Chemical mapping of a 177-nucleotide RNA with 2A3 and DMS.
The data come from the RNA Mapping Database (RMDB), library OK2TRN.
For 2A3, 2,223 sequencing reads were counted.
For DMS, 6,768 sequencing reads were counted.
RNA sequence: GGGAACGACUCGAGUAGAGUCGAAAAGGAUGUGUGUGGCUCCCGUCCGAGCCCUGGCCGCCUGGACGCAGACCAGCUGGCUUUGGGGAAGGCGUCCAGCUCUGAACAGGACUGAAAUGACCCUCGGUGCACUACUGUAUUUCGAUACAGUAGUGCAAAAAGAAACAACAACAACAAC
Reactivity to 2A3 in 0.01 (KOAc 150mM, MgCl2 10mM, bicine 150mM(pH8.5), 24C), signal-to-noise 2, nucleotides 027 to 126: g030g040a070u030g130u000g020u020g020u070g100g000c020u020c040c010c010g000u000c000c010g020a070g110c000c020c030u010g040g000c040c020g000c020c010u000g010g040a030c060g020c090a030g060a170c000c030a010g120c050u120g140g000c010u120u140u150g020g000g010g040a030a040g070g000c010g000u000c010c030a030g000c020u040c070u080g040a090a020c050a050g000g030a050c050u080g050a050a080a110u140g040a090c000c010c020u020c060g070g030
Reactivity to DMS in 0.01 (KOAc 150mM, MgCl2 10mM, bicine 150mM(pH8.5), 24C), signal-to-noise 5, nucleotides 027 to 126: g000g010a030u000g010u010g010u000g010u000g010g010c040u010c040c020c030g000u000c030c030g000a140g000c020c040c020u010g010g020c030c040g000c300c010u000g000g010a060c040g010c040a100g010a200c020c010a080g020c070u000g000g020c090u010u000u000g020g000g010g010a130a100g000g010c040g010u000c020c010a020g000c080u000c050u020g010a070a080c100a070g000g000a070c040u010g000a050a060a100u010g010a120c030c010c030u000c080g010g010